[RMDB]
RNA sequence: GGGAACGACUCGAGUAGAGUCGAAAAUGGAUCAGAUCAAGCAAGCGCAGAAAAUUCGUGAGGCUUUCUUCAACCGUAAAGGAAUUUUGGAUGUCAGCUUCUCGGUUGAGCCGCUCAGUUUGAGUAAGCGGCUAAUUUUAUUCGUAAAAUUAGCCGCAAAAGAAACAACAACAACAAC
Reactivity to 2A3 in 0.01 (KOAc 150mM, MgCl2 10mM, bicine 150mM(pH8.5), 24C), signal-to-noise 4, nucleotides 027 to 126: u190g070g000a030u130c030a050g010a120u010c010a040a000g060c010a050a020g010c000g000c050a020g230a090a110a050a010u300u260c020g000u010g000a020g010g000c030u030u050u000c010u100u010c010a080a090c030c030g140u210a170a060a060g080g080a120a120u190u180u100u140g070g020a070u170g020u060c020a000g000c020u020u000c000u030c010g010g040u030u020g030a030g080c050c020g000c010u010c030a030g010u020u040u040g000a020g040u080a110a000
Reactivity to DMS in 0.01 (KOAc 150mM, MgCl2 10mM, bicine 150mM(pH8.5), 24C), signal-to-noise 2, nucleotides 027 to 126: u020g020g000a100u010c050a100g020a060u030c010a020a030g030c030a170a100g060c010g030c040a280g000a040a100a040a040u000u080c000g010u010g000a090g000g000c010u020u010u020c030u000u000c020a010a050c020c050g030u050a080a050a210g010g020a300a080u030u000u030u010g000g000a030u020g000u000c070a080g010c010u000u000c020u020c050g000g000u010u000g010a150g010c080c020g000c040u020c120a100g000u010u010u000g000a040g000u040a050a090

Record summary: An RNA of 177 nucleotides, treated with 2A3 and DMS and read out base by base. The RNA was probed in 150 mM KOAc, 10 mM MgCl2 and 150 mM bicine (pH 8.5) at 24 C. 2A3 adducts were read by reverse transcription with SuperScript II with manganese. DMS adducts were read by reverse transcription with MarathonRT. It was measured as part of the RMDB library OK1LIB. Values cover nucleotides 27 to 126.